[RMDB]
RNA sequence: GGGAACGACUCGAGUAGAGUCGAAAACCAGGAGUACAAUUCACUACCUGGGCCUCUAGUGAAUUGUACUGAGGCAGGCUAUAUGUACGGUGGACAUGCGAAAGCAUGUCCAUCGUACGUAUAGCCAGCUCCUUCUUGGGUUCGCCCAAGAAGGAGCAAAAGAAACAACAACAACAAC
Reactivity to DMS in 0.01 (KOAc 150mM, MgCl2 10mM, bicine 150mM(pH8.5), 24C), signal-to-noise 1, nucleotides 027 to 126: c000c010a140g000g000a080g030u000a000c020a000a010u010u000c000a030c010u000a030c160c060u000g030g030g000c050c030u010c080u010a010g010u010g000a010a020u000u000g000u000a000c010u010g010a070g000g020c160a110g010g000c000u000a000u000a000u000g000u000a000c000g030g000u000g010g000a000c000a000u000g000c000g020a110a100a220g010c010a010u000g000u000c000c010a010u000c010g000u000a000c000g000u000a000u000a000g000c010c010a010